[RMDB]
RNA sequence: GGGAACGACUCGAGUAGAGUCGAAAAGGAAGCGGCAUUUGGUCAGGCGGAAGGGUAUAUCGAUCAAUAUUUUGCCAAAGCCAGCUACAAAUUUGAUAUCGCCGGUAGCCCGUUAACCACCAGCUACACUGAACUAAGUAUUCGUACUUAGUUCAGUAAAAGAAACAACAACAACAAC
Reactivity to 2A3 in 0.01 (KOAc 150mM, MgCl2 10mM, bicine 150mM(pH8.5), 24C), signal-to-noise 8, nucleotides 027 to 126: g060g010a080a020g030c030g020g020c070a100u070u060u150g030g020u120c050a030g050g000c020g040g050a030a030g140g020g030u080a100u020a030u270c060g040a020u040c020a070a020u080a110u130u120u090u100g020c010c000a040a010a000g020c010c010a020g010c000u030a050c040a050a130a060u110u070u070g070a060u070a020u160c070g010c040c000g000g020u010a010g000c000c020c000g030u030u050a040a030c010c010a010c010c010a020g020c020u050a040c030
Reactivity to DMS in 0.01 (KOAc 150mM, MgCl2 10mM, bicine 150mM(pH8.5), 24C), signal-to-noise 9, nucleotides 027 to 126: g010g010a110a090g020c060g010g020c040a100u000u020u000g020g020u010c090a160g010g010c050g010g010a100a090g000g000g010u010a060u010a070u010c090g010a070u000c080a050a060u010a070u000u000u000u000g010c030c040a040a090a130g010c040c040a050g010c050u000a070c090a040a070a090u010u010u000g010a070u000a080u000c100g020c120c040g000g010u000a050g010c010c020c040g010u000u000a050a110c050c030a100c040c040a100g010c090u000a060c160

Source: RMDB library OK2TST, as collected in RNAgym. An RNA of 177 nucleotides, treated with 2A3 and DMS and read out base by base. Reactivities are given for positions 27 through 126. The RNA was probed in 150 mM KOAc, 10 mM MgCl2 and 150 mM bicine (pH 8.5) at 24 C. 2A3 adducts were read by reverse transcription with SuperScript II with manganese. For DMS the reverse transcriptase was MarathonRT.